This 177-nucleotide RNA was probed chemically with 2A3.
The RNA was probed in 150 mM KOAc, 10 mM MgCl2 and 150 mM bicine (pH 8.5) at 24 C.
For 2A3, 441 sequencing reads were counted.
Reactivities are given for positions 27 through 126.
RNA sequence: GGGAACGACUCGAGUAGAGUCGAAAAUGCAGACUAGAGUGGAACUCGUAAUCCUCACGGGAGACGCGAGGCAGAGCACCCACCACGAGAACAACGAGCAGGCCAUGAUCUCCCAACUCGCCCCUGCUGCUCUCCCGUCUUUCGAGACGGGAGAGCAAAAAGAAACAACAACAACAAC
Reactivity to 2A3 in 0.01 (KOAc 150mM, MgCl2 10mM, bicine 150mM(pH8.5), 24C), signal-to-noise 1, nucleotides 027 to 126: u050g000c000a000g030a140c030u220a050g030a000g280u070g160g000a000a020c000u000c010g080u070a020a020u000c000c030u030c030a080c090g060g020g000a040g030a060c060g000c000g030a040g010g000c070a080g000a000g050c000a130c000c000c000a000c000c030a000c000g050a090g090a280a000c100a100a010c000g000a000g030c000a000g100g010c030c000a110u110g000a040u000c060u040c000c000c010a000a020c030u020c070g060c000c000c000c000u030g000c050